[RMDB]
RNA sequence: GGGAACGACUCGAGUAGAGUCGAAAACAUCUUUGUCCAUUUGAGCUGCUAUGACAAACUACUAAAAGCUGGACUGCUGAUGAGCAGGGCUCAAUUAUUCUCACAAUUCUAGAGGCUGAGAAGUCCAGUGAGAGAAUAGUUUCGACUAUUCUCUCACAAAAGAAACAACAACAACAAC
Reactivity to 2A3 in 0.01 (KOAc 150mM, MgCl2 10mM, bicine 150mM(pH8.5), 24C), signal-to-noise 2, nucleotides 027 to 126: c000a070u050c080u100u120u080g040u000c030c010a090u030u010u050g030a010g000c010u020g000c020u120a070u160g050a020c040a110a170a080c070u260a030c020u110a050a090a130a040g000c000u030g060g120a040c010u020g000c000u040g040a250u070g060a040g000c020a030g020g050g000c000u020c010a030a010u090u040a100u020u020c020u020c000a040c000a060a110u150u040c040u090a100g020a080g190g000c040u020g000a030g030a140a020g000u010c030c010a040
Reactivity to DMS in 0.01 (KOAc 150mM, MgCl2 10mM, bicine 150mM(pH8.5), 24C), signal-to-noise 3, nucleotides 027 to 126: c080a050u000c120u000u000u000g010u000c040c040a120u000u000u000g000a030g020c010u000g000c050u010a070u020g010a110c140a050a080a120c140u010a100c110u000a110a070a110a080g030c020u000g010g010a120c010u000g020c020u010g010a140u000g010a040g000c040a050g010g030g020c010u000c010a030a030u010u000a120u010u010c020u000c030a070c180a070a140u000u000c090u010a030g000a120g000g010c060u000g020a090g000a100a050g000u000c030c020a110